RNA sequence: GGGAACGACUCGAGUAGAGUCGAAAAAAAAAGAGUUUCCUUUAACCUAUAUGGAAGCAAAGAUCAAGAAUUCAACCUUCCUAUAUGGUUGACUUAAUUAUUCCCUAGGUUCCUGGAAGCUAAAAAAACAUGUUUCAAGAUUCGUCUUGAAACAUGUAAAAGAAACAACAACAACAAC
Reactivity to DMS in 0.01 (KOAc 150mM, MgCl2 10mM, bicine 150mM(pH8.5), 24C), signal-to-noise 2, nucleotides 027 to 126: a060a050a040a060a120g020a030g030u000u000u000c000c000u000u000u000a020a010c010c000u000a030u020a070u020g000g000a040a020g010c170a090a050a150g000a020u010c090a060a050g010a120a080u000u000c000a020a080c140c000u000u010c210c150u000a080u010a030u010g000g030u000u000g020a030c040u000u000a040a050u000u010a120u000u000c000c000c140u000a040g010g020u000u000c140c080u000g020g000a010a030g000c020u010a010a000a060a060a050a020
Reactivity to 2A3 in 0.01 (KOAc 150mM, MgCl2 10mM, bicine 150mM(pH8.5), 24C), signal-to-noise 2, nucleotides 027 to 126: a000a000a000a000a000g080a000g000u010u000u000c000c000u020u030u010a020a030c000c000u020a020u000a040u300g000g020a010a030g020c090a150a100a000g080a040u110c080a070a020g020a230a130u160u000c000a000a020c000c010u060u060c050c080u140a150u000a020u300g020g010u000u000g000a000c000u020u030a040a050u070u060a040u100u060c010c000c000u020a000g000g010u010u030c000c010u000g000g020a000a010g040c050u080a050a020a000a050a000a000
This 177-nucleotide RNA was probed chemically with DMS and 2A3. Conditions: 150 mM KOAc, 10 mM MgCl2 and 150 mM bicine (pH 8.5), 24 C. The data come from the RNA Mapping Database (RMDB), library M2PK90. Reactivities are given for positions 27 through 126.